[RMDB]
RNA sequence: GGGAACGACUCGAGUAGAGUCGAAAAGAUAUGGAGGAACCUGCUCGCUAGGGCAAUGUCGGAAACGACGACCCUAGAACUACGAGCCUGUUCCUCCUAAGUCAAAAGUGUGCCUUCGGGCACACAACGUUCGUACGAAGUUCGCUUCGUACGAACGAAAAGAAACAACAACAACAAC
Reactivity to DMS in 0.01 (KOAc 150mM, MgCl2 10mM, bicine 150mM(pH8.5), 24C), signal-to-noise 1, nucleotides 027 to 126: g000a030u000a300u020g010g000a000g000g000a000a010c000c020u000g000c010u000c010g010c000u010a000g060g000g000c140a100a030u010g000u010c000g000g000a150a150a170c000g010a000c010g000a040c000c000c000u000a010g000a080a050c150u000a300c040g000a010g000c000c050u000g030u000u000c010c010u010c000c000u000a010a080g010u010c040a080a040a080a040g010u000g000u000g010c030c000u000u020c210g000g020g010c000a000c000a010c000a030a060
Reactivity to 2A3 in 0.01 (KOAc 150mM, MgCl2 10mM, bicine 150mM(pH8.5), 24C), signal-to-noise 1, nucleotides 027 to 126: g000a000u100a020u160g000g000a000g010g000a000a010c020c040u000g020c010u000c030g030c030u010a010g060g010g040c140a200a160u300g000u000c000g010g090a060a080a030c010g010a000c020g230a200c000c000c000u000a010g000a010a020c020u070a030c100g000a000g000c000c020u020g000u000u020c010c000u010c000c000u000a010a000g010u000c010a000a000a060a110g010u000g010u000g000c020c000u050u130c300g050g000g000c010a000c000a020c010a000a000